Chemical mapping of a 177-nucleotide RNA with 2A3 and DMS. DMS adducts were read by reverse transcription with MarathonRT. As a SHAPE reagent, 2A3 marks flexible, mostly unpaired nucleotides at the ribose 2'-OH. The reactions ran in a buffer of 150 mM KOAc, 10 mM MgCl2 and 150 mM bicine (pH 8.5), at 24 C. Values cover nucleotides 27 to 126. For DMS, 1,841 sequencing reads were counted. High DMS reactivity at an A or C suggests that its Watson-Crick edge is free.
RNA sequence: GGGAACGACUCGAGUAGAGUCGAAAAGAUAUGGAGUAGCGGGAGCUCCCUGGGUUCCCUCGGAAACGAGCACCCUGGGAGCGACGAUCGCUACUCCUAAGUCAAAACUGAUCGUUCGCGAUCAGAACCUUGUUACAGACUUCGGUCUGUAACAAGGAAAAGAAACAACAACAACAAC
Reactivity to 2A3 in 0.01 (KOAc 150mM, MgCl2 10mM, bicine 150mM(pH8.5), 24C), signal-to-noise 1, nucleotides 027 to 126: g020a010u050a040u160g020g000a000g010u010a000g000c010g000g040g000a010g000c010u020c000c000c000u000g000g010g000u050u100c030c060c000u000c000g010g040a060a070a070c020g000a020g050c130a000c000c010c010u000g020g000g000a010g020c000g000a000c010g010a000u000c000g010c000u010a000c000u000c010c000u010a020a000g000u000c010a010a020a120a120c010u020g010a020u000c030g040u070u030c300g010c020g190a000u000c010a000g020a010a010
Reactivity to DMS in 0.01 (KOAc 150mM, MgCl2 10mM, bicine 150mM(pH8.5), 24C), signal-to-noise 2, nucleotides 027 to 126: g000a020u020a300u000g000g000a030g000u000a020g010c000g020g000g000a040g000c000u000c000c000c010u000g020g000g000u000u010c120c190c000u000c000g010g000a080a060a200c010g010a020g110c250a030c010c000c000u000g000g000g000a010g020c000g000a010c230g000a010u010c010g000c010u000a010c000u000c000c020u000a010a070g010u000c040a100a060a110a120c000u000g000a010u000c000g010u010u000c230g030c010g000a000u000c000a000g010a110a190